[RMDB]
RNA sequence: GGGAACGACUCGAGUAGAGUCGAAAAACAUCACCUGCAGAUAAAGCUGGACUUAAACCUGUAAUACUGGUGCCGUUAGAUGCUGUGUAAUCUUGAGCACGAACAAGCAAUACACCGUUUAAGUAAACCUGUUCUUUACCAGGCAAGUAAGACAGCGUAUUUAAUGGACUUUCGAGUCCAUUAAAUAAAAAGAAACAACAACAACAAC
Reactivity to DMS in 0.01 (KOAc 150mM, MgCl2 10mM, bicine 150mM(pH8.5), 24C), signal-to-noise 4, nucleotides 027 to 156: a090c060a100u000c070a070c020c030u000g000c050a090g010a160u000a040a060a140g020c030u010g020g010a270c010u010u000a040a040a020c010c020u010g050u000a050a130u000a050c020u000g020g030u000g020c040c050g030u000u000a050g020a050u000g010c050u020g050u010g030u000a100a080u010c010u000u000g000a090g020c060a080c100g020a080a110c060a060a040g000c030a060a150u010a050c020a030c080c040g020u000u000u000a020a050g020u000a070a120a080c010c010u000g010u000u010c070u000u000u000a050c090c040a080g030g000c030a060a110g020u000a060a080g010a080c040a050g020c000g010
Reactivity to 2A3 in 0.01 (KOAc 150mM, MgCl2 10mM, bicine 150mM(pH8.5), 24C), signal-to-noise 6, nucleotides 027 to 156: a020c040a100u140c070a080c040c040u100g030c080a040g030a200u140a090a140a020g010c020u030g040g010a240c030u040u070a060a100a230c010c010u030g020u030a070a060u100a270c020u030g010g020u030g030c030c000g050u010u020a030g000a050u040g010c120u040g050u020g020u100a060a130u140c000u010u040g040a070g100c050a020c150g080a150a040c040a030a010g020c010a040a040u020a020c000a000c000c010g000u000u030u060a070a110g030u090a020a040a100c010c000u040g020u110u060c020u060u030u000a060c050c000a000g030g000c020a060a010g030u010a000a020g010a020c000a000g000c010g030
Source: RMDB library OK3TST, as collected in RNAgym. Structure probing data (DMS and 2A3) for a 207-nucleotide construct. Reactivities are given for positions 27 through 156. The 2A3 profile rests on 4,303 reads. The DMS profile rests on 11,997 reads. The reactions ran in a buffer of 150 mM KOAc, 10 mM MgCl2 and 150 mM bicine (pH 8.5), at 24 C.